[RMDB]
RNA sequence: GGGAACGACUCGAGUAGAGUCGAAAAGAUAUGGAGGUUCGGGAGGAGAAGUCACGCGAUGAAAUGCGUUUAUCGGAAACGAUAAACGCAUGGAGCGUGUCACUCCGAGGAUCGAACCUCCUAAGUCCCUUGAUACAAAGUUCGCUUUGUAUCAAGGAAAAGAAACAACAACAACAAC
Reactivity to 2A3 in 0.01 (KOAc 150mM, MgCl2 10mM, bicine 150mM(pH8.5), 24C), signal-to-noise 2, nucleotides 027 to 126: g050a020u160a080u280g010g000a000g000g000u010u010c010g010g030g000a030g080g020a020g020a300a070g100u030c000a010c020g030c020g220a300u070g050a030a030a000u010g010c000g000u000u010u010a010u000c000g000g040a090a050a030c020g010a010u010a010a010a000c010g000c010a010u010g000g020a010g000c000g010u010g000u010c000a030c030u020c000c000g020a070g000g000a010u010c010g010a000a000c000c000u010c000c010u010a020a000g000u000c000
Reactivity to DMS in 0.01 (KOAc 150mM, MgCl2 10mM, bicine 150mM(pH8.5), 24C), signal-to-noise 2, nucleotides 027 to 126: g010a090u000a300u020g000g010a000g020g000u000u000c010g000g010g000a060g010g000a050g010a180a160g010u000c010a010c010g020c010g000a190u020g010a110a170a010u000g010c020g010u010u010u000a000u000c020g000g000a150a120a200c010g020a000u000a000a000a010c020g000c000a000u010g000g010a090g000c010g030u000g010u000c010a140c000u000c000c000g010a100g020g000a070u010c000g000a040a020c000c000u010c000c000u000a000a090g000u000c040

Notes: The record gives the reactivity of an RNA of 177 nucleotides to 2A3 and DMS. Reactivities are given for positions 27 through 126. 2A3 adducts were read by reverse transcription with SuperScript II with manganese. Source: RMDB library TTRINS, as collected in RNAgym. The RNA was probed in 150 mM KOAc, 10 mM MgCl2 and 150 mM bicine (pH 8.5) at 24 C.